[RMDB]
RNA sequence: GGGAACGACUCGAGUAGAGUCGAAAAGAUAUGGAAUUCCUCGCAUCGAUCUUAUGAUUGUAUACGUAACAUCACUCGGAAACGAGUGUGGUAUACAAUCAUAAGGGAGCGAGUGAAUUCCUAAGUCGUACGAUUAACGGUUCGCCGUUAAUCGUACAAAAGAAACAACAACAACAAC
Reactivity to 2A3 in 0.01 (KOAc 150mM, MgCl2 10mM, bicine 150mM(pH8.5), 24C), signal-to-noise 2, nucleotides 027 to 126: g040a050u150a070u200g010g020a010a000u000u010c000c000u000c000g000c020a300u300c070g080a090u050c030u000u020a020u000g000a000u010u000g040u000a000u000a010c090g070u080a260a080c090a210u300c000a030c000u000c000g090g000a130a090a090c030g000a010g000u010g000u000g020g000u000a000u000a000c000a000a000u000c000a000u000a020a010g000g000g000a030g000c010g020a010g040u120g010a000a010u010u000c000c000u010a150a000g130u080c070
Reactivity to DMS in 0.01 (KOAc 150mM, MgCl2 10mM, bicine 150mM(pH8.5), 24C), signal-to-noise 2, nucleotides 027 to 126: g000a040u010a300u020g010g000a000a000u000u000c030c000u020c000g020c010a300u000c190g000a040u010c030u000u000a000u010g020a010u000u000g000u000a000u000a000c000g010u000a080a180c270a050u000c000a030c000u000c000g030g000a110a070a200c000g000a030g030u000g020u010g030g000u010a000u010a000c000a000a000u000c000a000u000a000a000g000g010g010a050g010c000g000a020g000u000g010a000a020u000u000c000c000u000a010a080g010u000c060

The data come from the RNA Mapping Database (RMDB), library TTRINS. Chemical mapping of a 177-nucleotide RNA with 2A3 and DMS. Reactivities are given for positions 27 through 126. 2A3 adducts were read by reverse transcription with SuperScript II with manganese.